[RMDB]
RNA sequence: GGGAACGACUCGAGUAGAGUCGAAAAGAUAUGGACGAAGUACUCUUUUGACGCUGAACGGUCGGAAACGACCGUAAACAGCGAUAAGAGUCUUCGUCCUAAGUCAAAAGUAUCGUUCGCGAUACAACUUAUUACUCGUGUUCGCACGAGUAAUAAGAAAAGAAACAACAACAACAAC
Reactivity to DMS in 0.01 (KOAc 150mM, MgCl2 10mM, bicine 150mM(pH8.5), 24C), signal-to-noise 4, nucleotides 027 to 126: g010a020u010a300u010g000g000a020c000g020a010a010g000u000a020c020u010c000u010u000u010u000g000a220c130g030c010u000g010a070a030c010g020g000u000c000g030g000a060a020a100c010g000a020c000c000g000u000a010a100a300c020a000g010c000g000a100u010a010a010g000a010g010u000c000u000u000c000g000u000c000c000u000a010a050g000u020c020a070a080a120a140g000u000a010u000c010g020u000u020c290g040c030g010a020u000a000c000a130a180
Reactivity to 2A3 in 0.01 (KOAc 150mM, MgCl2 10mM, bicine 150mM(pH8.5), 24C), signal-to-noise 2, nucleotides 027 to 126: g010a010u060a030u110g000g000a000c000g010a000a020g020u280a070c030u020c050u040u120u190u300g290a170c120g000c010u010g010a050a010c000g000g000u000c010g000g000a040a030a020c030g000a010c000c000g000u010a020a040a010c010a010g010c000g010a010u070a040a000g000a000g000u000c000u000u010c000g010u000c000c000u010a010a000g000u000c000a000a010a000a140g000u000a010u030c020g020u070u120c300g000c010g130a000u000a010c010a010a030
Source: RMDB library TTRDES, as collected in RNAgym. The record gives the reactivity of an RNA of 177 nucleotides to DMS and 2A3. 2A3 adducts were read by reverse transcription with SuperScript II with manganese. The reactions ran in a buffer of 150 mM KOAc, 10 mM MgCl2 and 150 mM bicine (pH 8.5), at 24 C.